[RMDB]
RNA sequence: GGGAACGACUCGAGUAGAGUCGAAAAGCUUAAUUCGUUAAGCGUAGUAGGGGUCUAAUGCCGCUUCUAGUUCCGUGAACUACGACUGAAGCCUCCACGGUCGCACGGAAGGAAUGCAUUAGACGGAGGCACCCAUUGUAGAGCGUUCGCGCUCUAACACUUGACGCUAAUUCGUUAGCGUCAAGUGAAAAGAAACAACAACAACAAC
Reactivity to 2A3 in 0.01 (KOAc 150mM, MgCl2 10mM, bicine 150mM(pH8.5), 24C), signal-to-noise 4, nucleotides 027 to 156: g000c000u020u010a020a010u110u110c150g120u060u010a030a000g010c040g030u010a030g060u050a040g000g070g010g000u000c000u000a000a000u010g010c010c020g080c110u040u000c080u090a210g190u060u000c000c010g000u000g030a080a090c100u220a110c300g020a000c010u030g000a040a000g000c000c000u000c000c010a030c020g020g000u000c000g000c040a000c000g020g040a000a010g210g020a020a010u140g000c000a010u010u000a000g000a020c040g000g000a000g000g020c010a020c010c000c000a070u080u290g120u110a010g000a010g000c010g020u060u080c210g010c000g000c090u000c020u020a060a020
Reactivity to DMS in 0.01 (KOAc 150mM, MgCl2 10mM, bicine 150mM(pH8.5), 24C), signal-to-noise 2, nucleotides 027 to 156: g030c000u000u000a010a070u010u010c220g090u000u010a010a000g010c010g000u000a090g020u020a050g080g020g020g060u010c010u000a010a040u000g010c020c190g000c190u010u010c090u000a080g010u000u010c010c020g010u010g010a110a190c100u010a210c010g000a040c020u000g020a090a080g030c030c040u000c010c000a300c040g000g010u000c000g030c030a030c030g020g010a110a080g040g010a080a040u000g040c010a020u000u000a070g010a060c060g040g050a050g030g050c000a090c030c000c030a300u000u010g010u010a020g000a040g050c010g030u020u010c190g010c020g020c030u000c020u000a020a220

Source information
This 207-nucleotide RNA was probed chemically with 2A3 and DMS. For 2A3, 3,647 sequencing reads were counted. The data come from the RNA Mapping Database (RMDB), library RNAMAK. The reactions ran in a buffer of 150 mM KOAc, 10 mM MgCl2 and 150 mM bicine (pH 8.5), at 24 C. DMS adducts were read by reverse transcription with MarathonRT.